[RMDB]
RNA sequence: GGGAACGACUCGAGUAGAGUCGAAAAGCUGCGUUCUUUGAUGUCACCACCGAUGUGAUAUGGCAAGCCGCAGUUGGCAAAGGAAACGUAGGGGCCACGCUCGAACAUGAUGAUUUCAGCGUCUUCGCACUGCGCAAGAGUUCGCUCUUGCGCAGUGAAAAGAAACAACAACAACAAC
Reactivity to DMS in 0.01 (KOAc 150mM, MgCl2 10mM, bicine 150mM(pH8.5), 24C), signal-to-noise 3, nucleotides 027 to 126: g020c010u000g010c000g000u000u000c030u010u000u000g000a130u030g000u000c030a020c040c150a290c200c240g010a120u000g000u010g000a010u000a030u010g010g010c110a050a050g030c300c010g000c020a060g000u010u000g020g000c070a060a080a090g010g000a010a100a020c080g010u000a090g030g010g000g000c060c080a050c050g000c010u010c110g030a040a050c090a070u010g010a060u000g000a160u010u000u000c030a070g000c050g020u000c060u000u000c280g000
Reactivity to 2A3 in 0.01 (KOAc 150mM, MgCl2 10mM, bicine 150mM(pH8.5), 24C), signal-to-noise 1, nucleotides 027 to 126: g020c010u020g020c000g040u090u080c040u000u020u120g050a060u030g040u040c030a030c030c010a180c080c050g030a110u150g000u000g020a000u000a030u050g070g050c070a020a040g080c040c000g000c000a020g010u000u030g030g000c050a060a030a040g060g060a120a030a020c060g010u060a050g000g010g010g000c030c020a030c010g010c010u050c050g040a020a000c040a050u170g060a080u040g030a050u070u050u030c000a030g030c000g060u000c030u020u000c030g000
Annotation
This 177-nucleotide RNA was probed chemically with DMS and 2A3. For DMS, 1,304 sequencing reads were counted. The RNA was probed in 150 mM KOAc, 10 mM MgCl2 and 150 mM bicine (pH 8.5) at 24 C. For DMS the reverse transcriptase was MarathonRT. 2A3 adducts were read by reverse transcription with SuperScript II with manganese.